Structure probing data (DMS and 2A3) for a 177-nucleotide construct. Reactivities are rounded to 0.1 and cut off at 0 and 3. The reactions ran in a buffer of 150 mM KOAc, 10 mM MgCl2 and 150 mM bicine (pH 8.5), at 24 C. The data come from the RNA Mapping Database (RMDB), library OK2TST. DMS adducts were read by reverse transcription with MarathonRT. For DMS, 819 sequencing reads were counted. For 2A3, 971 sequencing reads were counted.

[RMDB]
RNA sequence: GGGAACGACUCGAGUAGAGUCGAAAAUUGGGUCCGCCAAUGUGAUGGUGCAAGUUGCCGCUGAUAAUAUCGCAAAUGGUUAUUCAAUGACUGUACAGCCAGUUCAGGCAUCCACACGAACAGCUGCGCGGUCUUACAGAUUCGUCUGUAAGACCGCAAAAGAAACAACAACAACAAC
Reactivity to DMS in 0.01 (KOAc 150mM, MgCl2 10mM, bicine 150mM(pH8.5), 24C), signal-to-noise 1, nucleotides 027 to 126: u000u010g000g000g040u000c030c080g010c020c020a070a130u000g020u000g020a050u000g040g010u010g020c080a080a090g000u000u010g010c070c080g030c050u000g000a040u000a040a100u000a260u010c060g030c080a070a050a120u000g050g020u000u000a040u010u000c150a050a060u030g000a050c040u000g000u010a130c080a090g000c010c010a090g000u000u000c040a060g000g000c030a000u000c000c070a010c170a070c180g030a020a060c180a150g010c010u000g020c230
Reactivity to 2A3 in 0.01 (KOAc 150mM, MgCl2 10mM, bicine 150mM(pH8.5), 24C), signal-to-noise 1, nucleotides 027 to 126: u050u010g050g000g000u000c000c080g010c000c000a030a060u100g000u040g080a130u070g000g030u050g040c020a040a100g050u050u000g070c000c000g000c020u010g040a030u020a230a110u120a050u120c080g020c080a000a090a140u160g000g040u040u040a080u100u120c070a110a070u080g020a050c060u040g000u100a030c010a030g040c000c010a010g000u000u010c010a000g010g010c010a000u000c010c010a030c010a000c040g090a170a010c030a030g020c020u060g020c020